An RNA of 207 nucleotides, treated with 2A3 and DMS and read out base by base. Reactivities are given for positions 27 through 156. For DMS the reverse transcriptase was MarathonRT. The data come from the RNA Mapping Database (RMDB), library OK3TST. For 2A3, 1,122 sequencing reads were counted.

RNA sequence: GGGAACGACUCGAGUAGAGUCGAAAAAUUAGCCACUCUUCCUGGAGCUGUAGGUCAGAAGUUAUUUCAGCAUCACUUACUAUAAAGAUGCCCGUUAGCUUCAGAUAUGUAGGUGUUUCAGACAACAGGGAAUAUUAUGGAGGGAAAUUAUAGUCAACAUAUUAGUCCCGUUCGCGGGACUAAUAUGAAAAGAAACAACAACAACAAC
Reactivity to 2A3 in 0.01 (KOAc 150mM, MgCl2 10mM, bicine 150mM(pH8.5), 24C), signal-to-noise 3, nucleotides 027 to 156: a020u090u040a030g010c000c000a060c010u010c030u070u020c030c010u010g010g000a000g010c000u000g090u170a050g020g030u100c070a030g010a120a010g030u100u160a120u060u150u120c080a020g010c040a020u020c020a000c020u070u140a060c040u120a050u100a180a090a020g010a030u090g020c020c010c020g110u020u050a000g000c000u020u020c000a010g000a000u070a030u060g050u030a020g020g020u040g060u010u050u080c080a080g030a070c020a060a010c010a060g000g000g010a020a070u090a010u230u100a060u200g030g020a060g120g020g030a020a040a030u300u240a030u210a090g050u230c000a010a020
Reactivity to DMS in 0.01 (KOAc 150mM, MgCl2 10mM, bicine 150mM(pH8.5), 24C), signal-to-noise 2, nucleotides 027 to 156: a130u020u000a110g020c000c030a040c040u000c020u000u000c050c010u020g010g000a130g010c010u000g020u000a060g000g010u000c100a110g020a100a040g010u010u000a070u000u000u000c030a070g020c020a040u010c000a110c120u000u000a140c110u010a220u020a110a090a150g020a060u000g030c000c010c040g000u010u000a010g050c020u000u000c030a090g000a050u000a050u010g020u000a050g020g010u000g030u000u000u030c020a060g010a160c040a040a060c030a050g050g000g030a100a090u000a070u000u000a060u010g000g000a160g000g000g000a040a100a090u000u000a060u010a070g000u000c040a030a150